[RMDB]
RNA sequence: GGGAACGACUCGAGUAGAGUCGAAAAAAAAAGAUAUGGACGUACAAGGCUUGGAUUUAGUACUAAUUUAUGUUCGGAAACGAACAUAACCAGUACUUGUCAGCCUUGAACGUCCUAAGUCAAAAAACAGUAAGUCUAACUUCGGUUAGACUUACUGAAAAGAAACAACAACAACAAC
Reactivity to 2A3 in 0.01 (KOAc 150mM, MgCl2 10mM, bicine 150mM(pH8.5), 24C), signal-to-noise 2, nucleotides 027 to 126: a000a010a010a000a010g060a050u170a060u090g010g010a000c020g000u030a040c000a010a020g040g040c030u260u280g280g000a060u300u300u030a020g000u020a000c000u000a020a120u000u040u040a000u010g000u000u000c020g000g050a030a080a040c010g010a010a000c010a010u010a000a000c090c040a000g000u000a000c020u010u020g030u000c010a020g010c000c000u000u000g010a000a000c000g010u010c000c000u000a000a010g000u030c030a050a030a030a130a080a100
Reactivity to DMS in 0.01 (KOAc 150mM, MgCl2 10mM, bicine 150mM(pH8.5), 24C), signal-to-noise 2, nucleotides 027 to 126: a000a030a080a220a080g000a020u010a300u030g000g010a010c010g040u000a150c010a040a010g010g000c000u030u000g070g020a010u000u010u000a000g010u000a000c000u020a130a150u000u000u000a000u000g000u000u000c000g010g000a140a110a190c000g010a020a000c000a030u020a010a000c300c190a040g000u000a000c000u000u000g020u000c000a010g000c000c000u000u000g000a050a000c000g010u000c000c000u000a000a050g020u010c080a010a030a060a050a050a120
The record gives the reactivity of an RNA of 177 nucleotides to 2A3 and DMS. It was measured as part of the RMDB library TTRDES. The reactions ran in a buffer of 150 mM KOAc, 10 mM MgCl2 and 150 mM bicine (pH 8.5), at 24 C. 2A3 adducts were read by reverse transcription with SuperScript II with manganese.